[RMDB]
RNA sequence: GGGAACGACUCGAGUAGAGUCGAAAACACAGCUUGGCGACCCGCCCAGGUACCUCGGGCGGUGGCGACGUGAUUGUGCAGGGCAACGUCGGGUGGAUGCCGGAUCAGCUCGCCCGUGAGAUCGAAGUGCAGAAGCGCCGAACGGCAACGAUGGCAGUAACUGUCUUGGAUUCGUCCAAGACAGUUAAAAAGAAACAACAACAACAAC
Reactivity to 2A3 in 0.01 (KOAc 150mM, MgCl2 10mM, bicine 150mM(pH8.5), 24C), signal-to-noise 3, nucleotides 027 to 156: c060a010c010a010g030c030u110u150g050g000c030g040a060c000c000c000g000c000c000c010a100g110g000u210a120c070c010u130c120g010g000g010c080g000g050u060g040g000c050g030a030c010g040u060g050a150u100u030g010u020g040c060a080g050g010g000c050a070a010c040g020u020c000g000g000g030u060g070g020a100u060g030c020c000g040g010a120u110c030a030g020c010u020c020g040c010c070c040g000u050g040a110g000a020u110c110g040a170a020g020u040g030c020a000g010a140a050g040c010g000c070c040g060a060a040c040g040g010c000a020a030c040g090a050u090g030g000c000a010g040
Reactivity to DMS in 0.01 (KOAc 150mM, MgCl2 10mM, bicine 150mM(pH8.5), 24C), signal-to-noise 2, nucleotides 027 to 156: c030a070c040a120g000c060u000u010g030g020c070g020a070c040c010c010g020c040c010c010a110g040g010u010a130c100c020u000c110g060g010g090c000g000g010u000g010g020c040g020a090c040g020u010g000a150u010u000g020u000g000c010a080g010g000g010c010a090a080c090g020u020c000g010g020g090u080g000g000a120u000g000c020c040g030g000a090u010c040a130g020c020u010c040g000c000c000c000g010u020g020a140g000a070u010c020g020a090a130g020u010g000c040a120g000a070a110g020c050g030c000c010g010a070a080c060g020g000c030a040a060c050g000a050u000g010g010c050a140g020
Record summary: This 207-nucleotide RNA was probed chemically with 2A3 and DMS. For DMS the reverse transcriptase was MarathonRT. Conditions: 150 mM KOAc, 10 mM MgCl2 and 150 mM bicine (pH 8.5), 24 C. 2A3 adducts were read by reverse transcription with SuperScript II with manganese. The DMS profile rests on 4,198 reads. The data come from the RNA Mapping Database (RMDB), library OK3TST.